RNA sequence: GGGAACGACUCGAGUAGAGUCGAAAAGAUACCGGAACCACGGUGACCUGGCAAUGGACCAUCCAUCCUAGAUCGGCGCUGGCCGCGCCGGUGUUGCCGGUGUUCGCCAGGAUGUGGCGGGGCUACGUGAACCUUGGCAUUUCGAUGCCAAGGUUCAAAAAGAAACAACAACAACAAC
Reactivity to DMS in 0.01 (KOAc 150mM, MgCl2 10mM, bicine 150mM(pH8.5), 24C), signal-to-noise 1, nucleotides 027 to 126: g010a130u000a080c010c010g000g000a090a120c070c000a090c110g010g000u010g030a010c030c000u070g000g020c000a080a100u010g030g000a060c100c030a140u030c080c070a300u000c000c030u000a040g010a020u000c030g000g030c040g020c010u010g010g030c230c080g010c030g010c020c010g030g000u010g000u000u000g030c000c050g000g010u000g000u020u010c090g120c020c030a100g010g020a150u020g000u010g010g010c030g000g000g010g030c180u000a010c180g000
Chemical mapping of a 177-nucleotide RNA with DMS. For DMS, 633 sequencing reads were counted. Values cover nucleotides 27 to 126. The RNA was probed in 150 mM KOAc, 10 mM MgCl2 and 150 mM bicine (pH 8.5) at 24 C.